[RMDB]
RNA sequence: GGGAACGACUCGAGUAGAGUCGAAAAGCGCUCGAAAGGGCGCUGUGCUCAAGGUAACAAUCGGUGAGAUGCGACAAUGGACAAUCCGCAGCCGGGUCCUAAGCUCUUCGCCGGGUAUGGAUCAUCGGUUCACAGACUAGAUGUCGGUGGGUCAUUACAGAAUAGUAGGCUUCGGCCUACUAUUCUGAAAAGAAACAACAACAACAAC
Reactivity to 2A3 in 0.01 (KOAc 150mM, MgCl2 10mM, bicine 150mM(pH8.5), 24C), signal-to-noise 1, nucleotides 027 to 156: g000c010g000c000u010c000g050a040a030a030g000g010g030c000g020c000u010g030u010g000c010u010c060a040a200g110g010u110a100a070c080a190a050u020c010g000g010u060g000a030g030a030u200g000c030g040a100c110a070a120u110g020g000a000c030a040a130u060c000c080g000c050a040g100c110c040g040g000g000u000c000c000u060a140a090g010c010u020c000u110u120c010g000c010c060g000g060g030u060a080u090g030g030a060u120c000a010u060c090g000g000u060u030c010a010c040a050g000a030c010u120a100g040a190u250g060u060c030g000g010u010g030g000g010u010c040a010u020u300a060
Reactivity to DMS in 0.01 (KOAc 150mM, MgCl2 10mM, bicine 150mM(pH8.5), 24C), signal-to-noise 2, nucleotides 027 to 156: g020c010g020c000u000c010g010a190a150a300g000g020g030c020g040c000u010g000u000g010c010u000c060a140a120g040g000u000a100a130c080a040a080u000c070g030g010u000g000a100g020a080u010g010c000g010a160c100a110a130u010g000g020a110c030a100a090u000c050c050g030c150a190g000c100c010g020g010g050u000c020c000u000a090a260g000c000u000c040u010u000c160g020c040c070g010g000g000u000a100u000g040g000a050u000c040a040u000c040g010g030u000u000c090a080c020a090g030a050c010u000a130g000a130u020g040u000c000g060g000u000g010g000g000u010c030a120u000u000a200